[RMDB]
RNA sequence: GGGAACGACUCGAGUAGAGUCGAAAAUCAAUGGACUUCGGUCCAUUGAAAAAGUCAAUAAAGCUAGUGGUGAGCUGAAUGACAACAGCACAAAGAAAAGAAAAAUCGUGCACUUCGGUGCACGAAACCCCUAUAAUCCGUUCGCGGAUUAUAGGGGAAAAGAAACAACAACAACAAC
Reactivity to 2A3 in 0.01 (KOAc 150mM, MgCl2 10mM, bicine 150mM(pH8.5), 24C), signal-to-noise 1, nucleotides 027 to 126: u000c020a010a000u000g000g000a010c030u010u090c240g090g010u000c000c010a000u030u000g020a000a000a000a000a000g020u040c020a030a040u070a140a060a020g010c020u100a020g180u080g300g090u140g160a010g030c030u040g010a030a100u060g010a060c010a020a020c000a050g000c060a010c070a150a180a050g280a010a100a030a030g250a020a090a030a020a040u050c010g000u000g000c000a000c000u060u030c220g020g000u000g000c000a000c020g000a000a010a010
Reactivity to DMS in 0.01 (KOAc 150mM, MgCl2 10mM, bicine 150mM(pH8.5), 24C), signal-to-noise 1, nucleotides 027 to 126: u010c000a000a000u000g010g000a000c020u000u010c220g030g030u000c010c000a010u010u000g000a000a110a040a090a160g000u000c000a040a060u000a140a160a040g000c010u000a050g010u000g040g040u000g010a040g000c000u000g010a060a070u000g000a000c040a160a050c140a070g010c050a090c140a070a060a120g000a060a050a030a100g020a020a040a110a120a140u000c000g010u000g000c000a000c010u000u020c300g040g000u000g000c000a000c000g000a000a010a150
This 177-nucleotide RNA was probed chemically with 2A3 and DMS. The DMS profile rests on 855 reads. For DMS the reverse transcriptase was MarathonRT. The reactions ran in a buffer of 150 mM KOAc, 10 mM MgCl2 and 150 mM bicine (pH 8.5), at 24 C. Values cover nucleotides 27 to 126.